[RMDB]
RNA sequence: GGGAACGACUCGAGUAGAGUCGAAAAGUGUGAAGUGAGUGAGCCCCUUACGAGCACGAAUUACAAGGCUCUAUUGACAUUACUGGGCGCCAGGAGCCCUACCUGGACAAGUCUCGAAGAUCGGGCCGAGAUUGAGAGACGACUAUUAACGGCCACAAUGCUAAUGCAUAUUCGUAUGCAUUAGCAUAAAAGAAACAACAACAACAAC
Reactivity to 2A3 in 0.01 (KOAc 150mM, MgCl2 10mM, bicine 150mM(pH8.5), 24C), signal-to-noise 4, nucleotides 027 to 156: g070u070g010u030g070a050a020g020u020g040a030g020u080g070a040g010c030c000c000c000u030u040a030c050g010a010g010c010a000c070g050a040a050u190u130a120c070a120a060g040g000c000u010c000u020a060u020u100g020a040c050a090u070u180a130c090u090g000g020g000c040g000c000c000a010g020g020a060g000c000c020c010u030a080c000c000u010g010g000a010c030a070a070g000u000c000u000c010g030a050a020g010a030u020c030g020g000g000c010c010g070a070g010a060u040u090g020a050g000a000g010a030c020g040a000c020u060a090u280u090a140a030c000g000g000c000c000a030c070a010
Reactivity to DMS in 0.01 (KOAc 150mM, MgCl2 10mM, bicine 150mM(pH8.5), 24C), signal-to-noise 3, nucleotides 027 to 156: g020u000g030u010g010a130a200g020u000g010a060g020u010g010a160g020c040c030c070c060u000u000a080c060g010a250g000c030a130c060g010a130a190u000u000a120c100a040a090g010g010c020u000c000u000a160u000u010g000a130c040a100u000u000a090c120u000g000g020g030c030g010c020c010a060g000g010a200g010c030c010c020u000a040c010c000u000g000g010a110c110a050a140g000u000c020u020c040g000a200a110g000a090u000c030g030g020g010c070c020g010a180g020a070u000u000g030a300g010a150g020a070c000g010a100c080u010a100u020u000a130a100c030g020g010c020c000a110c070a100